[RMDB]
RNA sequence: GGGAACGACUCGAGUAGAGUCGAAAAGGAUCCUUCCUAGUCAGGAAGGUAACUGGCUCAUAUCCAGUUACCUCUGACUAGGAUGGUUGUCAUUGUACACGAGGAUGGCAACGUGUAUUUAGGAUCGCUAGUACAGAGUAUUCGUACUUUGUACUAGAAAAGAAACAACAACAACAAC
Reactivity to 2A3 in 0.01 (KOAc 150mM, MgCl2 10mM, bicine 150mM(pH8.5), 24C), signal-to-noise 9, nucleotides 027 to 126: g020g000a000u000c000c000u010u010c000c000u020a000g000u000c000a000g030g240a260a020g010g000u000a000a000c000u000g010g000c010u040c130a110u100a050u150c000c000a000g000u000u000a000c000c000u000c000u000g000a000c000u000a000g000g000a000u010g010g000u000u000g000u000c010a010u000u040g120u130a050c140a040c150g110a060g170g030a050u050g050g000c020a030a010c010g050u110g010u030a140u020u060u040a000g000g000a000u000c000g000
Reactivity to DMS in 0.01 (KOAc 150mM, MgCl2 10mM, bicine 150mM(pH8.5), 24C), signal-to-noise 9, nucleotides 027 to 126: g000g000a000u000c000c000u000u000c000c000u000a000g000u000c000a010g000g010a180a040g010g010u000a000a000c000u000g000g010c120u000c300a120u010a190u010c000c000a010g000u000u000a000c000c000u000c000u000g000a010c000u000a000g000g000a000u000g000g010u000u000g000u000c020a030u000u000g010u000a050c140a090c180g000a100g010g000a050u000g000g000c030a030a040c000g010u000g010u000a060u000u000u000a020g010g000a010u000c010g000
The record gives the reactivity of an RNA of 177 nucleotides to 2A3 and DMS. For 2A3, 112,877 sequencing reads were counted. The data come from the RNA Mapping Database (RMDB), library OK2TRN. For DMS the reverse transcriptase was MarathonRT. For DMS, 212,639 sequencing reads were counted. Reactivities are given for positions 27 through 126.